[RMDB]
RNA sequence: GGGAACGACUCGAGUAGAGUCGAAAAUGAAAUAAAGCGUACGAAGAACCACGUACGCAAAGAGAAAAGCGGACCUACGAGCGCACAGCGCUCAGGUAUGAGCGCAAAACAUAGGAAUUGAAAAAAAUCAAACAUAUUACUUCGGUAAUAUGUUUGAAAAAGAAACAACAACAACAAC
Reactivity to 2A3 in 0.01 (KOAc 150mM, MgCl2 10mM, bicine 150mM(pH8.5), 24C), signal-to-noise 2, nucleotides 027 to 126: u030g000a000a010a070u170a090a080a040g000c000g000u020a000c000g070a260a100g010a140a040c020c000a030c010g000u010a000c000g010c020a010a050a000g040a000g000a020a100a020a030g000c000g010g070a030c000c020u100a060c060g040a030g010c020g000c000a070c040a270g010c010g010c000u000c000a000g040g030u110a120u160g040a010g000c000g000c030a030a070a020a000c040a030u090a020g040g090a080a120u140u140g130a110a090a000a020a010a000a030
Reactivity to DMS in 0.01 (KOAc 150mM, MgCl2 10mM, bicine 150mM(pH8.5), 24C), signal-to-noise 3, nucleotides 027 to 126: u010g010a110a060a100u010a060a090a160g000c000g000u000a000c030g010a070a080g010a150a120c070c080a110c020g000u000a000c010g000c010a040a020a110g000a090g020a040a050a060a120g010c010g000g000a090c020c000u000a060c140g000a060g020c030g010c040a080c180a180g000c000g020c000u000c000a010g000g040u010a040u000g010a040g010c010g030c010a060a020a030a050c110a070u000a050g010g040a120a130u010u020g000a000a010a030a100a050a110a110
Chemical mapping of a 177-nucleotide RNA with 2A3 and DMS.
For DMS the reverse transcriptase was MarathonRT.
The 2A3 profile rests on 2,002 reads.
The RNA was probed in 150 mM KOAc, 10 mM MgCl2 and 150 mM bicine (pH 8.5) at 24 C.